[RMDB]
RNA sequence: GGGAACGACUCGAGUAGAGUCGAAAAGGUGUUAGUUCAUUAAGACAGCAGGACGGUGGCCAUGGAAGUCGGUAUCCGCUAAGGAGUGUGUAACAACUCACCUGCCAAAUGGACUAGCCCUGAAAAUGGAUGACGCUAGCAGUGGAUGGUCGAUGCCCUAAGACAUUCUCUUCGGAGAAUGUCUUAGAAAAGAAACAACAACAACAAC
Reactivity to DMS in 0.01 (KOAc 150mM, MgCl2 10mM, bicine 150mM(pH8.5), 24C), signal-to-noise 3, nucleotides 027 to 156: g000g010u010g040u000u000a030g020u000u000c020a030u000u000a130a150g010a110c100a080g000c030a060g000g020a110c030g000g020u000g020g000c020c010a110u000g020g010a090a120g020u000c060g000g020u000a100u010c010c020g000c040u000a100a100g030g010a050g020u000g000u000g030u000a120a060c030a060a040c010u010c010a120c060c000u000g010c000c020a080a060a050u010g000g010a000c010u000a060g020c010c000c000u010g000a060a050a090a080u000g000g020a090u000g000a080c060g010c070u000a040g000c030a100g020u000g010g010a110u000g010g010u010c060g010a130u000g000c050c040
Reactivity to 2A3 in 0.01 (KOAc 150mM, MgCl2 10mM, bicine 150mM(pH8.5), 24C), signal-to-noise 5, nucleotides 027 to 156: g010g020u130g000u140u000a000g000u000u000c010a010u030u060a110a080g100a210c090a050g000c000a000g010g010a000c010g000g030u020g070g000c010c010a020u030g040g020a040a010g030u070c030g010g000u020a020u020c010c000g000c010u020a010a030g010g000a010g000u010g010u010g000u040a020a030c020a020a000c020u000c010a010c000c000u000g000c010c010a020a060a000u010g010g000a000c000u000a000g000c000c010c000u000g030a060a060a020a030u130g040g000a040u060g010a020c060g010c100u070a030g030c040a040g050u040g060g040a080u050g040g010u030c030g020a050u110g040c000c010

Structure probing data (DMS and 2A3) for a 207-nucleotide construct. The RNA was probed in 150 mM KOAc, 10 mM MgCl2 and 150 mM bicine (pH 8.5) at 24 C. As a SHAPE reagent, 2A3 marks flexible, mostly unpaired nucleotides at the ribose 2'-OH. For 2A3, 7,197 sequencing reads were counted.